The record gives the reactivity of an RNA of 177 nucleotides to DMS and 2A3.
Values cover nucleotides 27 to 126.
RNA sequence: GGGAACGACUCGAGUAGAGUCGAAAAGCAACGUCAAGCGAUGGGCGUUGCGCUCCAUAUUGUCUUACUUCCUUUUUUGAAUUACUGCAUAGCACAAUUGAUUCGUACGACGCCGACUUUGAUGAGUUCCUUGUAGCAACUUCGGUUGCUACAAGGAAAAAGAAACAACAACAACAAC
Reactivity to DMS in 0.01 (KOAc 150mM, MgCl2 10mM, bicine 150mM(pH8.5), 24C), signal-to-noise 1, nucleotides 027 to 126: g000c030a020a000c000g000u000c060a020a150g020c180g000a090u000g000g010g020c010g010u000u030g050c060g000c150u010c000c030a080u020a140u000u040g020u020c020u050u000a140c120u040u000c000c000u010u000u010u030u000u020g010a020a010u000u050a150c060u000g000c040a010u080a070g000c030a030c070a120a130u000u010g010a150u000u000c060g040u000a130c000g000a050c070g040c020c030g000a040c060u000u000u000g030a060u030g000a300g040u010
Reactivity to 2A3 in 0.01 (KOAc 150mM, MgCl2 10mM, bicine 150mM(pH8.5), 24C), signal-to-noise 4, nucleotides 027 to 126: g000c000a000a000c000g010u020c030a100a040g060c040g140a100u140g020g010g000c000g000u000u000g000c000g000c010u010c000c010a020u050a110u140u100g040u000c020u050u050a080c010u060u070c010c030u070u050u050u040u050u160g120a100a050u100u040a070c020u010g060c020a060u040a130g050c020a010c020a120a120u070u110g020a040u090u030c010g030u050a070c060g020a030c030g010c020c000g000a020c010u020u060u110g070a080u050g010a000g050u010